The record gives the reactivity of an RNA of 207 nucleotides to DMS and 2A3. Source: RMDB library OK3TST, as collected in RNAgym. The DMS profile rests on 3,497 reads.

RNA sequence: GGGAACGACUCGAGUAGAGUCGAAAAUAAAUGUUCUUUUGUGCUUAGGACAUAGCUCUUGAAGAACACUUGGACUCUGGGGCCAGUCCUCAUCACUGACACCCUAUCUCAAGGAUCAGACAAGUAUUCUGUUAGGGUGUUAUCAGUUCGUAAACAAUGGACUAAUUUACUUCGGUAAAUUAGUCCAAAAAGAAACAACAACAACAAC
Reactivity to DMS in 0.01 (KOAc 150mM, MgCl2 10mM, bicine 150mM(pH8.5), 24C), signal-to-noise 2, nucleotides 027 to 156: u000a010a050a070u000g030u000u000c020u000u010u000u000g050u000g030c030u000u000a070g030g010a160c090a140u000a040g010c000u000c030u010u000g030a050a030g000a020a090c010a100c100u000u000g040g000a170c020u000c070u000g010g030g060g020c010c030a080g030u010c030c020u040c040a060u000c070a090c070u000g030a040c010a050c000c000c000u000a020u000c040u000c050a060a020g020g000a040u000c030a180g020a200c130a080a150g010u010a050u000u000c030u000g000u030u000a020g030g010g040u010g000u000u000a030u000c050a080g010u000u000c060g000u000a100a060a100c090a120a300
Reactivity to 2A3 in 0.01 (KOAc 150mM, MgCl2 10mM, bicine 150mM(pH8.5), 24C), signal-to-noise 2, nucleotides 027 to 156: u260a000a060a040u090g020u060u060c030u050u110u100u100g000u000g040c050u030u040a040g050g010a030c040a070u150a010g020c000u030c010u050u090g120a140a000g010a090a030c070a040c060u010u070g030g040a030c000u010c020u040g010g020g000g000c060c010a020g000u000c010c000u000c000a010u040c010a010c020u000g000a000c000a000c010c040c000u000a000u000c100u000c200a210a010g000g000a030u010c010a020g140a270c100a300a060g060u110a070u020u000c010u010g010u000u020a000g010g000g000u010g010u010u010a030u000c010a050g000u000u140c000g070u160a040a000a000c000a000a020